[RMDB]
RNA sequence: GGGAACGACUCGAGUAGAGUCGAAAAGCACUGGUCAACAAGGCCGCAGGCAAACCGAGGUUUGCCGUGCGCGCCUACACCCGUUGCAGCAAGUGCGGCCGCCCGCGUGCGGUCUACCGCAAGUUCGAACAUCUCGACGGUUCGCCGUCGAGAUGUUAAAAGAAACAACAACAACAAC
Reactivity to DMS in 0.01 (KOAc 150mM, MgCl2 10mM, bicine 150mM(pH8.5), 24C), signal-to-noise 1, nucleotides 027 to 126: g030c040a020c010u010g000g000u030c010a060a050c020a150a060g000g050c020c000g020c010a070g020g000c000a000a030a000c010c020g000a280g040g020u000u000u000g020c010c000g010u000g020c000g000c300g020c020c000u000a010c300a130c140c110c110g000u000u000g010c090a080g010c100a120a020g010u010g010c020g000g000c050c010g000c000c000c210g000c300g000u010g010c020g000g020u000c010u010a080c000c020g000c120a120a120g000u010u010c000g000